Structure probing data (2A3) for a 207-nucleotide construct. 2A3 adducts were read by reverse transcription with SuperScript II with manganese.

RNA sequence: GGGAACGACUCGAGUAGAGUCGAAAAGUUCAUCUGGUUCGCCAGAUGAACAAAAACCGUAGGAUCUCAGAUUCUUUGGACCAACAGCUUCGAAAGAGGACAUGGUCGAAUCUGAGGAUCCUAAACGGAAAAAUAUCAGUUCUUCGGAACUGAUAAACCAUUUCGAUCCUUUCGAGGAUCGAAAUGGAAAAGAAACAACAACAACAAC
Reactivity to 2A3 in 0.01 (KOAc 150mM, MgCl2 10mM, bicine 150mM(pH8.5), 24C), signal-to-noise 1, nucleotides 027 to 156: g010u000u000c010a000u000c000u000g000g040u040u090c220g000c130c010a000g000a000u000g000a000a010c000a000a080a000a000a000c010c000g010u020a020g000g000a000u000c010u000c030a000g000a010u040u040c000u250u270u300g080g000a010c000c000a030a120c040a200g070c020u040u030c010g090a170a080a090g010a070g000g010a050c010a110u040g030g000u010c030g000a000a000u060c000u000g030a020g000g030a000u010c000c000u010a130a040a000c010g010g080a000a140a000a090a090u100a020u030c000a000g000u000u020c030u040u070c120g070g000a000a010c010u010g000a000u000a000a000a000